[RMDB]
RNA sequence: GGGAACGACUCGAGUAGAGUCGAAAAGCUAAAGACUUCGGUCUUUAGCAAAUAAAUUCAGGUGAUUUGCUACCUUUAAGUGCAGCUAGAAAUUCAUAAAUAAAACAACGAGGUUCGCCUCGUUGAAGUAUGAGGAUUACUUCGGUAAUCCUCAUACAAAAGAAACAACAACAACAAC
Reactivity to DMS in 0.01 (KOAc 150mM, MgCl2 10mM, bicine 150mM(pH8.5), 24C), signal-to-noise 1, nucleotides 027 to 126: g010c000u000a000a000a020g000a010c000u000u030c190g040g020u020c000u000u000u000a020g000c000a010a050a080u010a050a100a120u000u000c100a050g010g010u020g010a130u010u000u000g020c010u010a020c020c030u000u010u000a010a020g000u000g000c030a000g030c300u000a010g020a040a080a090u010u010c100a050u000a050a050a140u030a070a130a140a120c020a000a000c010g000a000g000g010u000u010c300g010c000c000u000c010g010u000u000g010a030a050
Reactivity to 2A3 in 0.01 (KOAc 150mM, MgCl2 10mM, bicine 150mM(pH8.5), 24C), signal-to-noise 2, nucleotides 027 to 126: g020c000u000a040a000a010g020a000c010u040u200c300g010g000u000c000u000u010u000a010g000c010a000a010a000u020a000a030a040u060u040c040a000g000g000u010g060a290u080u120u090g050c000u010a040c020c010u060u170u200a030a000g000u000g000c000a010g020c020u060a050g150a120a190a060u290u080c070a100u250a300a070a040u100a030a050a050a080c000a000a000c000g000a010g070g000u070u100c240g060c020c000u000c010g000u010u000g000a000a000
Chemical mapping of a 177-nucleotide RNA with DMS and 2A3. For 2A3 the reverse transcriptase was SuperScript II with manganese. The RNA was probed in 150 mM KOAc, 10 mM MgCl2 and 150 mM bicine (pH 8.5) at 24 C. For 2A3, 1,080 sequencing reads were counted.